[RMDB]
Structure probing data (2A3 and DMS) for a 177-nucleotide construct. The reactions ran in a buffer of 150 mM KOAc, 10 mM MgCl2 and 150 mM bicine (pH 8.5), at 24 C. The 2A3 profile rests on 1,781 reads.
RNA sequence: GGGAACGACUCGAGUAGAGUCGAAAACGUGGAUCGAGACAGUACGAUCAUCUACGACUGAUCGGCGCUAGUACACGCGUAUCGCGACUAUGGCCGAUCGCGCCUCGUACGCGCGUACUGCGCAGUACCCCAAACAAGGCUUCGGCCUUGUUUGGGGAAAAGAAACAACAACAACAAC
Reactivity to 2A3 in 0.01 (KOAc 150mM, MgCl2 10mM, bicine 150mM(pH8.5), 24C), signal-to-noise 2, nucleotides 027 to 126: c010g000u020g030g040a010u070c180g010a040g070a160c120a090g180u260a060c070g000a050u050c030a010u010c040u050a010c010g080a080c060u080g020a180u110c040g060g000c020g000c110u170a000g020u000a010c040a010c000g020c000g010u030a040u140c040g010c060g090a040c030u150a200u220g110g000c050c060g030a020u030c000g000c050g010c010c070u100c060g020u020a020c000g000c010g000c000g000u000a010c000u030g000c010g000c020a000g010u060a090
Reactivity to DMS in 0.01 (KOAc 150mM, MgCl2 10mM, bicine 150mM(pH8.5), 24C), signal-to-noise 1, nucleotides 027 to 126: c040g000u000g030g000a000u010c050g000a140g000a060c120a130g010u000a100c100g000a120u000c020a050u000c020u000a000c020g000a270c070u010g000a070u000c040g000g000c010g000c000u000a000g000u000a010c000a120c000g020c010g000u000a070u000c010g020c060g020a010c100u000a040u000g000g000c030c080g020a200u010c020g060c040g030c300c100u000c100g010u000a010c000g000c000g000c020g000u000a010c010u000g000c000g000c000a040g010u010a110